RNA sequence: GGGAACGACUCGAGUAGAGUCGAAAACAGUCAAAGUGAAGGCGGGCCAGACCAUCGCCGCAUUCUACCAGAGCACCGUCAUGAUCUUUGGCACGAUGGCUCGCUACAUGCUGAGAGUUAGGGAAAAGAUACUCCAGCAUUUCGAUGCUGGAGUAUCAAAAGAAACAACAACAACAAC
Reactivity to DMS in 0.01 (KOAc 150mM, MgCl2 10mM, bicine 150mM(pH8.5), 24C), signal-to-noise 3, nucleotides 027 to 126: c080a160g020u000c030a020a090a070g000u000g000a120a130g030g030c010g030g000g010c020c060a080g010a120c100c080a070u010c060g020c030c030g020c090a070u020u000c000u010a110c060c050a120g000a090g000c050a060c030c010g010u010c090a080u000g010a070u010c030u000u010u000g010g000c020a070c090g010a110u000g020g010c010u000c030g010c020u000a060c120a040u000g000c030u000g000a180g010a110g000u000u010a090g010g000g000a070a070a070a140
Reactivity to 2A3 in 0.01 (KOAc 150mM, MgCl2 10mM, bicine 150mM(pH8.5), 24C), signal-to-noise 2, nucleotides 027 to 126: c040a020g020u030c030a080a000a000g020u030g080a110a000g080g000c000g000g000g030c010c020a030g020a060c030c030a070u100c040g030c050c020g000c000a010u080u070c030u060a100c030c030a030g030a020g110c050a080c070c030g070u060c040a270u120g050a050u000c020u040u130u030g020g000c040a000c070g050a060u060g030g000c010u000c030g000c000u070a080c020a060u070g060c020u030g030a020g000a010g110u060u130a080g020g020g000a000a100a070a020
Conditions: 150 mM KOAc, 10 mM MgCl2 and 150 mM bicine (pH 8.5), 24 C. Chemical mapping of a 177-nucleotide RNA with DMS and 2A3. The 2A3 profile rests on 2,190 reads. It was measured as part of the RMDB library OK2TRN. Values cover nucleotides 27 to 126. For DMS, 2,314 sequencing reads were counted.